[RMDB]
RNA sequence: GGGAACGACUCGAGUAGAGUCGAAAAAUACAGCCUAAUCGAGCGGAGGAAAACGGCACUCCGAAAAUCCGGUACGAUUAUGAUCCCACUGCGUCGACGCUAGAUGCAGAACCGGAUUGCCGAGGAAGAUAACCUGAUCAUUCGUGAUCAGGUUAUCAAAAGAAACAACAACAACAAC
Reactivity to 2A3 in 0.01 (KOAc 150mM, MgCl2 10mM, bicine 150mM(pH8.5), 24C), signal-to-noise 3, nucleotides 027 to 126: a000u140a030c050a010g040c010c000u050a020a060u050c000g010a010g050c000g030g010a010g020g020a060a230a030a070c010g000g000c000a000c020u000c000c010g020a040a020a000a000u000c000c000g000g030u030a060c090g090a120u170u120a070u300g070a040u020c000c000c000a010c010u010g000c000g000u020c020g020a090c130g070c290u150a060g000a010u010g000c010a000g010a020a020c010c010g000g000a000u000u020g020c020c000g010a040g060g080a100a110
Reactivity to DMS in 0.01 (KOAc 150mM, MgCl2 10mM, bicine 150mM(pH8.5), 24C), signal-to-noise 4, nucleotides 027 to 126: a120u010a120c170a130g010c040c000u000a040a040u000c010g010a050g010c020g000g000a030g000g000a060a090a080a110c030g010g010c020a040c030u000c000c000g020a030a050a010a030u000c000c000g000g010u010a120c190g010a110u000u000a050u010g010a090u000c000c000c020a300c030u000g000c000g020u000c010g010a130c260g020c260u010a080g000a000u000g000c010a010g000a030a040c020c000g000g000a010u010u000g010c030c020g000a120g000g000a080a110